[RMDB]
RNA sequence: GGGAACGACUCGAGUAGAGUCGAAAAAUUGCCAAGCUCACUUUUAAUCAUGAGAAAGAAAUUACCCACAUGGAGUCAGCAGAAAAUGAAAAAGUAGAGCUCGUGCUGUGAAUAAUUCCAGCAAGUGAUUCCAUUCCGAUUUCGAUCGGAAUGGAAUAAAAGAAACAACAACAACAAC
Reactivity to 2A3 in 0.01 (KOAc 150mM, MgCl2 10mM, bicine 150mM(pH8.5), 24C), signal-to-noise 2, nucleotides 027 to 126: a020u130u180g100c000c010a020a000g000c000u000c010a010c000u010u000u010u050a140a120u120c000a010u050g070a010g150a110a080a060g090a050a230a070u150u120a180c000c000c000a090c060a210u090g000g010a040g030u060c050a010g000c010a020g050a110a040a000a000u040g030a000a070a000a050a000g000u060a040g000a000g000c050u070c010g020u040g020c000u000g020u080g020a020a030u190a110a030u210u000c000c020a010g000c000a040a090g100u070g180
Reactivity to DMS in 0.01 (KOAc 150mM, MgCl2 10mM, bicine 150mM(pH8.5), 24C), signal-to-noise 2, nucleotides 027 to 126: a070u020u010g000c020c040a220a090g000c020u000c030a040c020u000u030u010u010a120a090u010c000a020u000g000a170g030a090a150a130g000a010a040a050u020u010a110c030c040c040a100c210a100u040g000g010a030g010u000c040a050g040c070a110g000a080a090a160a000u000g000a060a040a010a010a020g000u010a140g000a010g000c000u000c150g010u010g000c000u000g000u000g000a070a290u040a050a060u030u020c010c020a010g000c010a090a100g000u000g010